[RMDB]
RNA sequence: GGGAACGACUCGAGUAGAGUCGAAAAGAUAUGGAUUGCGAUGAAAUCCCUUUCGAGGAUCUCGGAAACGAGGGAGAAACGGAUGGAGCAAUCCUAAGUCAAACAUGUUAACUUCGGUUAACAUGAAUCGUAUCGGUAUGUUCGCAUACCGAUACGAAAAAGAAACAACAACAACAAC
Reactivity to 2A3 in 0.01 (KOAc 150mM, MgCl2 10mM, bicine 150mM(pH8.5), 24C), signal-to-noise 2, nucleotides 027 to 126: g000a040u080a020u160g000g000a000u020u000g030c080g260a300u010g040a060a020a050u030c010c000c000u010u050u000c080g080a300g010g000a020u020c000u030c000g010g110a070a070a060c040g000a020g030g000g000a030g000a010a000a020c020g010g010a010u040g000g030a010g020c010a000a000u030c010c000u000a080a010g050u020c020a060a060a080c000a010u020g000u000u000a010a000c010u040u070c300g120g000u000u000a000a000c020a010u010g000a010a080
Reactivity to DMS in 0.01 (KOAc 150mM, MgCl2 10mM, bicine 150mM(pH8.5), 24C), signal-to-noise 2, nucleotides 027 to 126: g000a040u010a300u000g010g000a000u000u000g010c000g000a110u010g000a080a090a020u000c000c000c040u000u010u000c010g000a060g000g010a040u010c000u000c000g010g000a120a060a220c000g000a000g000g010g000a020g020a010a020a000c300g010g000a020u000g010g000a050g010c000a000a020u000c010c010u000a020a060g040u010c050a100a160a180c000a000u000g010u000u000a000a000c010u010u030c230g010g000u000u000a000a000c000a000u010g010a040a050
Chemical mapping of a 177-nucleotide RNA with 2A3 and DMS. It was measured as part of the RMDB library TTRDEL. The reactions ran in a buffer of 150 mM KOAc, 10 mM MgCl2 and 150 mM bicine (pH 8.5), at 24 C. 2A3 adducts were read by reverse transcription with SuperScript II with manganese.